Structure probing data (2A3) for a 177-nucleotide construct. The reactions ran in a buffer of 150 mM KOAc, 10 mM MgCl2 and 150 mM bicine (pH 8.5), at 24 C. It was measured as part of the RMDB library OK1LIB. As a SHAPE reagent, 2A3 marks flexible, mostly unpaired nucleotides at the ribose 2'-OH. Reactivities are rounded to 0.1 and cut off at 0 and 3.

[RMDB]
RNA sequence: GGGAACGACUCGAGUAGAGUCGAAAAUUCAUUGCGAUCAAGGAACUCGACCGUUCGCCGGACAUACCGUUUGCCGGGCAUUGCCAGGAUCUUCUGGCAGUGCAACAUGUACUGCGGUUCGCUCAUCCGACUCCAUACGCUUCGGCGUAUGGAGUCGAAAAGAAACAACAACAACAAC
Reactivity to 2A3 in 0.01 (KOAc 150mM, MgCl2 10mM, bicine 150mM(pH8.5), 24C), signal-to-noise 3, nucleotides 027 to 126: u210u120c100a010u080u220g010c000g040a030u060c080a040a160g070g000a120a060c020u030c040g030a050c010c010g030u050u060c090g050c030c000g000g030a030c020a060u100a030c030c010g050u100u170u110g070c020c010g020g030g040c000a000u010u010g000c000c000a010g050g000a190u060c060u300u060c000u040g000g000c020a000g000u000g020c000a020a020c020a020u120g030u100a030c080u080g000c010g000g000u040u080c050g000c040u020c000a140u050c030